[RMDB]
RNA sequence: GGGAACGACUCGAGUAGAGUCGAAAAACGAGUCCGUACGCGGACUCGAAGGGCCCCAGAAGACCAAGAGGCCCAAACCUACCACUCAUUAGAUGCAUGGAAAUCACUAGGUGAUACGUCACCUAGAACACGCUUUUAAGCUUCGGCUUAAAAGCAACACCACGACAUAGUUCGCUAUGUCGUGGUGAAAAGAAACAACAACAACAAC
Reactivity to 2A3 in 0.01 (KOAc 150mM, MgCl2 10mM, bicine 150mM(pH8.5), 24C), signal-to-noise 1, nucleotides 027 to 156: a000c000g000a010g000u000c000c000g030u010a020c300g010c000g020g040a000c000u060c000g000a000a000g000g000g010c000c070c000c020a080g120a260a010g050a200c070c000a120a030g010a050g000g010c000c000c000a070a050a000c050c020u090a050c030c020a000c050u080c020a020u160u100a110g010a110u070g040c070a050u030g030g110a010a030a080u160c040a050c080u000a000g000g000u000g040a000u020a040c250g070u000c000a000c010c000u010a000g000a000a040c030a000c030g000c000u000u000u000u000a000a000g010c050u070u120c140g040g000c000u000u010a000a020a000a000g000c000a000a000
Overview
Structure probing data (2A3) for a 207-nucleotide construct. The data come from the RNA Mapping Database (RMDB), library M2RFPK. Conditions: 150 mM KOAc, 10 mM MgCl2 and 150 mM bicine (pH 8.5), 24 C. The 2A3 profile rests on 680 reads.